RNA sequence: GGGAACGACUCGAGUAGAGUCGAAAAACGGGCUAGAGUCGCAAGACCGGUAGCAAUACCGACAGAGGUCAUAUACGUCAGUUAAGCCUUGGUGGUGUCACGACAUCCGGGUCGAAAAUCUAGUGAAUCGCCGUAGUGCAGCGUGUUCGUCCGCGUCCUUAAUUGGUCAGUUCGCUGACCAAUUAAGAAAAGAAACAACAACAACAAC
Reactivity to DMS in 0.01 (KOAc 150mM, MgCl2 10mM, bicine 150mM(pH8.5), 24C), signal-to-noise 4, nucleotides 027 to 156: a070c030g020g000g040c010u000a090g010a080g030u000c030g000c090a090a140g000a100c030c000g030g030u000a060g030c180a090a120u000a100c030c000g020a100c060a280g000a090g020g020u000c020a100u000a170u000a070c090g020u000c060a080g030u000u000a120a140g020c020c010u000u010g000g020u000g010g020u000g010u000c070a100c040g000a090c030a070u000c030c050g030g010g030u000c020g000a090a010a070a100u010c040u000a050g000u010g020a110a080u000c050g020c000c000g050u010a080g000u000g010c060a040g020c020g010u000g000u000u000c060g020u000c040c020g010c060g000u000c060
Reactivity to 2A3 in 0.01 (KOAc 150mM, MgCl2 10mM, bicine 150mM(pH8.5), 24C), signal-to-noise 7, nucleotides 027 to 156: a000c020g010g020g000c020u020a030g010a030g100u060c020g020c080a080a020g040a060c020c010g000g000u010a010g020c040a050a060u020a050c010c010g040a030c060a030g120a040g020g020u050c040a010u070a010u040a190c080g050u040c060a120g010u060u090a070a010g020c000c000u020u030g020g010u040g020g030u040g060u040c070a040c070g070a030c010a020u030c030c020g030g030g050u040c040g040a050a050a010a060u060c060u060a040g040u050g090a050a060u080c060g000c020c010g040u050a050g030u010g040c020a020g000c020g010u040g040u040u040c020g030u050c020c020g040c030g030u090c010